[RMDB]
RNA sequence: GGGAACGACUCGAGUAGAGUCGAAAAACAAUACCGAUUUAAGGUUAUUCUGUGAUAUUCUAGGGGCUUACGCUCAAGGACAAGAGGAAAUUUUAAAUCUUACUAAACUAUGGGCGGUAAUGUUACCGCCACAGGCUACUUUCGAGUAGCCUGUGGCAAAAGAAACAACAACAACAAC
Reactivity to 2A3 in 0.01 (KOAc 150mM, MgCl2 10mM, bicine 150mM(pH8.5), 24C), signal-to-noise 2, nucleotides 027 to 126: a000c070a060a070u060a040c030c010g030a040u010u110u200a090a030g010g000u040u080a090u150u000c050u030g130u030g030a030u040a050u300u000c050u080a070g000g000g000g000c020u050u040a020c060g010c010u030c000a000a000g000g000a030c030a130a010g010a010g070g090a050a120a070u080u150u040u140a070a130a030u040c000u020u080a110c000u100a060a160a030c030u080a230u100g000g040g000c010g090g030u040a030a000u110g020u080u050a130c010c020
Reactivity to DMS in 0.01 (KOAc 150mM, MgCl2 10mM, bicine 150mM(pH8.5), 24C), signal-to-noise 3, nucleotides 027 to 126: a050c050a070a080u000a070c010c010g010a110u010u020u000a070a060g010g000u000u010a080u000u020c040u000g020u000g020a130u010a090u000u010c020u000a090g030g000g000g010c030u000u010a070c120g000c010u000c010a100a100g000g000a030c100a090a080g000a100g010g000a020a040a130u000u000u000u010a050a040a060u010c000u010u010a110c070u010a060a080a100c110u030a100u000g000g010g000c010g000g010u030a020a050u000g010u000u000a090c040c020